This 177-nucleotide RNA was probed chemically with 2A3 and DMS.
RNA sequence: GGGAACGACUCGAGUAGAGUCGAAAAACUGCUCGAGUUACGACUCGAGCAGAUGGGCAUGUGAUGUGACCUUCCUGAGCCUGCAUUCCCUCACCUGGAAAUGAUGAGCAGUUACUGAUGCCACAAAGGUUGAUAUAACGUUCGCGUUAUAUCAACCAAAAGAAACAACAACAACAAC
Reactivity to 2A3 in 0.01 (KOAc 150mM, MgCl2 10mM, bicine 150mM(pH8.5), 24C), signal-to-noise 7, nucleotides 027 to 126: a010c000u000g000c000u000c000g000a020g000u020u060a090c240g050a020c020u000c010g000a000g000c000a000g000a010u060g020g000g020c030a030u050g070u120g100a100u120g060u050g090a160c000c000u030u030c010c000u030g020a010g010c000c020u040g020c010a040u050u060c020c000c000u010c020a080c020c030u030g030g060a050a090a090u090g060a070u060g020a030g020c020a010g040u050u020a030c020u060g040a070u060g010c010c000a050c060a080a090a040
Reactivity to DMS in 0.01 (KOAc 150mM, MgCl2 10mM, bicine 150mM(pH8.5), 24C), signal-to-noise 3, nucleotides 027 to 126: a220c010u000g000c010u000c000g020a020g020u000u000a110c190g030a030c000u000c000g010a000g010c020a010g000a030u010g000g000g010c010a020u020g010u000g010a090u050g010u000g010a040c040c060u000u000c010c000u000g000a130g010c020c010u000g000c100a100u010u010c030c000c010u010c110a140c090c060u010g000g000a080a070a060u010g010a040u000g000a070g000c020a010g010u000u000a100c060u000g000a060u000g010c020c040a070c150a040a080a080
Conditions: 150 mM KOAc, 10 mM MgCl2 and 150 mM bicine (pH 8.5), 24 C. The data come from the RNA Mapping Database (RMDB), libraries RFM100 and RFMREP.